Annotation
Structure probing data (DMS and 2A3) for a 177-nucleotide construct. The RNA was probed in 150 mM KOAc, 10 mM MgCl2 and 150 mM bicine (pH 8.5) at 24 C. 2A3 adducts were read by reverse transcription with SuperScript II with manganese. Reactivities are given for positions 27 through 126. DMS adducts were read by reverse transcription with MarathonRT.

[RMDB]
RNA sequence: GGGAACGACUCGAGUAGAGUCGAAAACGAUACGGGCGUCGCCAGCGUUUUGAUCGUCAUCGCGAGCGCGGUUGGCGGCUUCUCCAUCGCGCCGAACGCGUGUACGGUUUCCUCGGUGCCGAGGAAAGAAAAUAUAAUUAUUCGUAAUUAUAUUUUCAAAAGAAACAACAACAACAAC
Reactivity to DMS in 0.01 (KOAc 150mM, MgCl2 10mM, bicine 150mM(pH8.5), 24C), signal-to-noise 3, nucleotides 027 to 126: c030g010a150u010a050c180g020g000g020c240g020u000c080g020c040c040a160g010c050g010u000u010u020u000g000a050u000c020g010u000c030a030u010c060g010c010g000a100g010c030g020c020g010g010u000u000g030g010c100g000g010c230u000u000c030u000c030c020a030u010c030g010c020g000c010c050g010a090a100c020g000c030g010u000g010u000a040c050g010g010u000u000u000c000c010u000c060g000g000u010g010c120c020g020a080g000g000a040a020a140
Reactivity to 2A3 in 0.01 (KOAc 150mM, MgCl2 10mM, bicine 150mM(pH8.5), 24C), signal-to-noise 1, nucleotides 027 to 126: c010g000a010u170a160c100g110g000g000c050g020u140c060g000c000c030a010g000c000g000u000u000u040u170g030a040u040c000g030u010c020a070u130c060g000c020g030a010g000c030g010c000g040g000u050u070g010g020c010g040g030c110u240u070c000u020c010c000a020u000c010g000c000g000c040c020g080a130a030c000g010c020g030u030g010u060a010c010g000g000u000u050u010c000c000u000c020g000g080u170g160c090c020g020a020g010g070a140a070a040